Source: RMDB library RFMREP, as collected in RNAgym. This 177-nucleotide RNA was probed chemically with 2A3 and DMS. The DMS profile rests on 934 reads. The 2A3 profile rests on 1,087 reads.
RNA sequence: GGGAACGACUCGAGUAGAGUCGAAAAAAUUGAAAUUUCAUUAGGUUGCCUAAUUUGGGUAACAAGUGCAGUGCGUCCUAGUGGCUCUGAGUGAGGGUUCCGUCCCCUCUCAUCCAUUACAAACGCCGUACUUUAGGAACUUCGGUUCCUAAAGUACAAAAGAAACAACAACAACAAC
Reactivity to 2A3 in 0.01 (KOAc 150mM, MgCl2 10mM, bicine 150mM(pH8.5), 24C), signal-to-noise 2, nucleotides 027 to 126: a000a040u190u130g120a140a130a040u090u180u080c040a040u030u150a040g180g000u010u010g000c000c000u160a230a300u150u240u300g020g000g000u010a000a000c020a040a010g020u000g080c110a030g020u000g180c000g000u000c010c010u010a020g020u000g000g000c020u010c010u040g000a000g000u020g030a200g020g000g010u250u300c070c020g200u250c020c010c010c000u000c010u000c010a020u160c000c000a000u030u000a010c040a040a140a000c020g000c030c010
Reactivity to DMS in 0.01 (KOAc 150mM, MgCl2 10mM, bicine 150mM(pH8.5), 24C), signal-to-noise 1, nucleotides 027 to 126: a020a050u010u000g000a150a170a110u000u000u000c010a000u000u000a100g040g020u000u010g010c000c000u010a080a180u020u000u010g010g010g020u000a010a020c020a060a080g030u010g010c260a100g020u010g020c000g010u000c100c260u000a050g000u000g000g000c040u000c000u000g010a050g010u000g000a150g010g000g000u000u010c250c170g010u000c040c000c000c040u010c000u000c010a000u010c000c000a010u000u000a010c200a090a150a030c030g010c010c110